[RMDB]
RNA sequence: GGGAACGACUCGAGUAGAGUCGAAAACAAAGAAAGAAAUUAGCUCGCCAGUUAGCGAGGUCUGUCCCCACACGACAGAUAAUCGGGUGCAACUCCCGCCCCUUUUCCGAGGGUCAUCGGAACCAAAAAAACUCAGGCAACUUCGGUUGCCUGAGAAUCACAUAGUACUGUUCGCAGUACUAUGUGAAAAAGAAACAACAACAACAAC
Reactivity to DMS in 0.01 (KOAc 150mM, MgCl2 10mM, bicine 150mM(pH8.5), 24C), signal-to-noise 2, nucleotides 027 to 156: c030a100a100a180g000a130a090a210g000a150a070a190u020u020a220g030c000u000c000g030c010c000a300g070u000u000a050g070c000g010a010g030g040u010c000u000g000u010c000c000c030c300a180c120a090c180g000a020c000a000g000a010u000a050a020u000c000g000g000g000u020g000c020a100a300c040u000c010c000c020g000c010c010c010c030u070u000u000u000c040c000g020a020g000g000g010u010c040a070u010c060g000g000a070a090c110c040a000a010a160a030a030a000a260c000u000c000a020g010g010c000a010a020c000u000u010c240g010g000u000u000g020c000c000u000g000a000g000a020a070
Reactivity to 2A3 in 0.01 (KOAc 150mM, MgCl2 10mM, bicine 150mM(pH8.5), 24C), signal-to-noise 5, nucleotides 027 to 156: c000a000a130a040g180a090a140a030g080a030a160a080u150u070a100g030c000u010c000g030c030c050a150g130u120u130a010g030c000g000a000g000g020u000c000u010g010u010c030c030c040c010a060c020a000c070g010a000c000a000g010a010u030a030a070u070c010g000g010g000u010g000c010a000a000c010u000c000c000c000g020c010c000c000c000u110u170u040u020c000c000g010a000g010g000g030u090c030a000u000c000g010g010a000a000c020c020a010a160a070a030a020a030a040c000u000c000a000g010g000c000a000a010c000u050u120c190g100g000u010u000g040c000c000u000g000a000g000a000a000
The data come from the RNA Mapping Database (RMDB), library M2RFPK.
An RNA of 207 nucleotides, treated with DMS and 2A3 and read out base by base.
2A3 adducts were read by reverse transcription with SuperScript II with manganese.
For DMS, 1,825 sequencing reads were counted.